[RMDB]
RNA sequence: GGGAACGACUCGAGUAGAGUCGAAAAGAUGAAGCAAGAGGAAGAGGUCACUAUGCGCCAGUUCUGGUUGAGAUAUUUUGCCGCGACGGAAAAAACGUCCUGGCUGGCUUGCCUGAGCGCGCCGCAGGGCUAGACGAUUUUUCGAAAUCGUCUAGCCAAAAGAAACAACAACAACAAC
Reactivity to DMS in 0.01 (KOAc 150mM, MgCl2 10mM, bicine 150mM(pH8.5), 24C), signal-to-noise 4, nucleotides 027 to 126: g000a020u030g000a070a070g010c060a060a080g010a050g010g000a040a040g000a070g020g020u010c040a090c080u010a090u010g010c040g010c120c040a110g010u020u000c010u010g000g000u010u020g020a020g000a050u030a100u010u010u020u010g020c000c020g000c300g000a030c040g020g000a000a070a080a030a060a110c060g000u010c000c080u010g010g000c000u000g000g000c030u010u030g000c040c020u010g010a080g000c010g000c150g050c070c060g010c120a090g010
Reactivity to 2A3 in 0.01 (KOAc 150mM, MgCl2 10mM, bicine 150mM(pH8.5), 24C), signal-to-noise 4, nucleotides 027 to 126: g070a030u130g030a020a030g040c040a040a020g010a020g100g000a030a050g010a010g040g020u040c010a020c100u110a090u120g020c000g000c020c030a020g010u030u010c020u060g020g010u100u170g050a010g040a030u170a130u110u160u150u140g020c030c010g020c040g000a000c030g000g000a070a010a000a010a010a020c010g000u000c000c000u040g010g010c010u000g030g000c030u020u050g000c000c000u040g030a020g030c060g000c020g000c010c010g040c010a020g000
Conditions: 150 mM KOAc, 10 mM MgCl2 and 150 mM bicine (pH 8.5), 24 C. This 177-nucleotide RNA was probed chemically with DMS and 2A3. DMS adducts were read by reverse transcription with MarathonRT. Values are in units of 0.01, from 0 to 300, in steps of 10. For 2A3 the reverse transcriptase was SuperScript II with manganese. Reactivities are given for positions 27 through 126.